[RMDB]
Conditions: 150 mM KOAc, 10 mM MgCl2 and 150 mM bicine (pH 8.5), 24 C. Chemical mapping of a 177-nucleotide RNA with DMS and 2A3.
RNA sequence: GGGAACGACUCGAGUAGAGUCGAAAAGAAAUGAGGCUUCUGUUCACUCACGCUGGACCCCUGCCCAGCAGUGUUUUAGCCAUUUCUGUGUGAAAUGUAUGUUGUGGGCUGGGUGGCGCAGCCUGACCUCUUAGGCAUUGUUCGCAAUGCCUAAGAGAAAAGAAACAACAACAACAAC
Reactivity to DMS in 0.01 (KOAc 150mM, MgCl2 10mM, bicine 150mM(pH8.5), 24C), signal-to-noise 4, nucleotides 027 to 126: g000a040a070a070u020g010a100g000g010c030u000u020c020u010g020u010u030c040a050c040u000c080a080c140g010c110u000g000g010a130c020c020c050c020u010g010c020c000c030a020g010c020a030g010u010g010u000u010u000u010a110g000c160c010a050u010u000u000c000u020g010u050g010u030g010a050a040a030u010g010u010a100u010g000u010u010g010u000g000g000g020c010u000g000g000g000u010g000g010c040g000c060a050g000c040c010u010g000a140c170
Reactivity to 2A3 in 0.01 (KOAc 150mM, MgCl2 10mM, bicine 150mM(pH8.5), 24C), signal-to-noise 4, nucleotides 027 to 126: g070a020a050a010u130g030a040g070g020c030u060u050c070u120g090u120u110c040a050c060u070c010a050c030g010c040u040g030g050a080c000c000c000c080u030g020c000c000c000a010g000c050a040g020u020g030u040u060u030u140a050g000c010c000a000u010u010u000c030u040g170u060g060u100g200a090a050a050u050g020u080a150u120g000u070u020g020u010g000g030g000c010u040g000g070g000u050g040g000c060g000c070a010g000c010c000u040g050a070c000
Overview:
For DMS the reverse transcriptase was MarathonRT. The 2A3 profile rests on 2,342 reads.